Overview
Chemical mapping of a 170-nucleotide RNA with 2A3 and DMS. The reactions ran in a buffer of 150 mM KOAc, 10 mM MgCl2 and 150 mM bicine (pH 8.5), at 24 C. Reactivities are rounded to 0.1 and cut off at 0 and 3.

RNA sequence: GGGAACGACUCGAGUAGAGUCGAAAACUCCUUGCAUGCUGGGGACGAAGCCGCCCCCGGGCGCUCCCCUCUGUCCACCUUCGAGGGGGUUCACACCCCCAACCGGCGGGCCGGCUGCUCUUCUUUCGUAGCUGAGAGUUCGCUCUCAGCAAAAGAAACAACAACAACAAC
Reactivity to 2A3 in 0.01 (KOAc 150mM, MgCl2 10mM, bicine 150mM(pH8.5), 24C), signal-to-noise 6, nucleotides 027 to 129: c010u050c010c010u040u110g050c040a080u080g050c040u030g010g000g010g040a040c050g070a080a010g020c000c000g020c010c000c000c010c000g000g020g020c060g010c030u120c000c010c010c000u020c020u040g070u010c040c050a090c050c030u110u140c040g030a100g000g000g030g000g030u090u120c020a050c000a030c020c000c000c000c000a010a010c010c010g030g000c090g010g000g030c070c030g010g000c000u030g010c010u020c030u130u020c020u020u070u070c120g040u080a050
Reactivity to DMS in 0.01 (KOAc 150mM, MgCl2 10mM, bicine 150mM(pH8.5), 24C), signal-to-noise 7, nucleotides 027 to 129: c130u030c000c000u000u000g040c130a070u000g050c100u020g030g020g030g020a000c120g050a080a040g030c000c000g000c100c000c030c000c070g000g000g000c100g000c110u050c000c010c020c030u000c070u030g040u000c040c070a090c020c010u040u080c110g020a070g000g000g000g000g000u020u040c190a110c200a250c040c010c030c030c000a100a120c010c020g000g000c160g050g000g100c100c060g040g000c020u040g040c060u040c000u030u100c050u000u000u000c090g040u000a130